Source: RMDB library RFM100, as collected in RNAgym.
Chemical mapping of a 177-nucleotide RNA with 2A3 and DMS.
DMS adducts were read by reverse transcription with MarathonRT.
The reactions ran in a buffer of 150 mM KOAc, 10 mM MgCl2 and 150 mM bicine (pH 8.5), at 24 C.
[RMDB]
RNA sequence: GGGAACGACUCGAGUAGAGUCGAAAAUGUUUACGGUUGAUAGAAGCCAGUUUUGUCAUUUUGAUGAAAUUUCAUCCUAUCCUUAGUUCCAAAACCGCUCCAAUGACUUCCUUUUUAUUGAUUUUUCUUCGGAUACAUACUUCGGUAUGUAUCCGAAAAAAGAAACAACAACAACAAC
Reactivity to 2A3 in 0.01 (KOAc 150mM, MgCl2 10mM, bicine 150mM(pH8.5), 24C), signal-to-noise 2, nucleotides 027 to 126: u100g030u030u080u070a020c030g010g030u030u010g070a100u080a200g080a040a010g060c040c050a020g020u040u000u000u040g070u010c020a030u010u070u040u230g050a020u030g030a020a070a140u120u100u080c010a040u050c010c010u030a050u030c020c010u080u080a030g030u110u020c020c000a040a020a020a100c010c010g020c030u010c040c030a040a070u050g040a090c000u070u080c000c000u020u070u040u090u090a120u090u120g110a100u030u050u000u030u050c030
Reactivity to DMS in 0.01 (KOAc 150mM, MgCl2 10mM, bicine 150mM(pH8.5), 24C), signal-to-noise 1, nucleotides 027 to 126: u020g000u020u000u080a100c070g000g040u010u000g020a070u020a040g040a070a050g000c090c140a070g000u010u000u010u020g080u000c020a080u000u010u120u010g000a020u000g010a020a110a140u010u000u000c020a010u000c050c010u030a100u000c020c090u000u010a080g000u020u000c020c060a030a040a050a070c130c050g010c030u020c020c090a010a040u010g050a000c120u010u000c000c010u020u000u000u020u050a070u010u000g000a140u000u000u000u000u010c030